[RMDB]
RNA sequence: GGGAACGACUCGAGUAGAGUCGAAAACAGUCGUUCUAAAUAAUAAGAACACUUAUAGAUCACAGCUUGGAUGCGUUUUCUUUAAUGGUGCUGAUAUUUCUGACACCAUUCCUGAUGAGAAACAGAAUACCAUCAAUCUUCGGAUUGAUGAAAAGAAACAACAACAACAAC
Reactivity to 2A3 in 0.01 (KOAc 150mM, MgCl2 10mM, bicine 150mM(pH8.5), 24C), signal-to-noise 9, nucleotides 027 to 129: c060a010g020u040c030g000u040u000c000u040a080a130a080u290a060a040u180a120a030g030a070a010c040a020c040u090u060a080u110a150g050a030u070c040a020c030a090g040c020u090u100g080g050a090u150g050c020g050u030u030u040u020c000u030u090u110a030a020u020g000g000u000g000c020u030g040a060u040a220u190u190u040c020u010g030a060c000a000c000c000a010u050u020c010c020u090g040a130u140g070a050g070a040a040a000c020a010g100a080a030u070a120c020
Reactivity to DMS in 0.01 (KOAc 150mM, MgCl2 10mM, bicine 150mM(pH8.5), 24C), signal-to-noise 9, nucleotides 027 to 129: c220a000g000u010c110g000u000u000c000u030a060a100a100u040a080a090u030a080a070g020a030a020c060a060c030u010u030a090u030a110g010a030u050c020a050c060a120g030c050u010u010g020g020a070u010g000c110g000u000u000u000u010c020u000u040u020a060a030u040g030g010u000g040c020u000g030a130u050a040u080u020u000c050u000g000a160c000a020c030c010a030u000u000c130c030u050g000a060u060g050a060g030a080a050a050c040a030g030a120a050u070a010c160